[RMDB]
RNA sequence: GGGAACGACUCGAGUAGAGUCGAAAAUCUGGACCGUUCGCGGUCCAGAAACUACCGAGAAUGCGACUCGGAAUAUAAACGCAACCCUUGGAAACAAGGGAACACUCUGCUGCUUCGGCAGCAGAAAGUGUUUUUCAAUGUUCGCAUUGAAAAACACAAAAGAAACAACAACAACAAC
Reactivity to 2A3 in 0.01 (KOAc 150mM, MgCl2 10mM, bicine 150mM(pH8.5), 24C), signal-to-noise 1, nucleotides 027 to 126: u000c000u000g010g020a000c020c010g030u060u060c230g000c030g080g000u050c000c000a000g000a000a010a000c010u020a020c000c000g000a000g010a080a100u040g000c010g030a020c000u000c010g000g110a060a010u200a010u040a040a030a000c010g000c010a020a070c010c000c030u010u010g000g010a090a010a000c000a000a010g020g000g010a020a000c020a020c020u030c000u000g010c000u010g000c000u030u070c270g130g000c000a000g000c000a000g010a000a000a000
Reactivity to DMS in 0.01 (KOAc 150mM, MgCl2 10mM, bicine 150mM(pH8.5), 24C), signal-to-noise 1, nucleotides 027 to 126: u000c010u010g000g020a000c000c000g040u000u020c220g050c020g000g000u000c000c010a000g000a010a090a200c110u000a250c020c000g000a000g020a020a110u000g020c000g000a030c020u000c010g000g000a110a080u020a020u000a000a000a000c030g020c080a060a260c030c000c000u050u000g010g000a150a140a210c000a020a000g020g000g000a070a050c130a010c070u000c000u000g010c000u000g000c010u000u010c170g070g020c050a020g000c000a000g010a010a020a060

An RNA of 177 nucleotides, treated with 2A3 and DMS and read out base by base. The RNA was probed in 150 mM KOAc, 10 mM MgCl2 and 150 mM bicine (pH 8.5) at 24 C. For 2A3, 2,021 sequencing reads were counted. For DMS the reverse transcriptase was MarathonRT. 2A3 adducts were read by reverse transcription with SuperScript II with manganese. Reactivities are rounded to 0.1 and cut off at 0 and 3.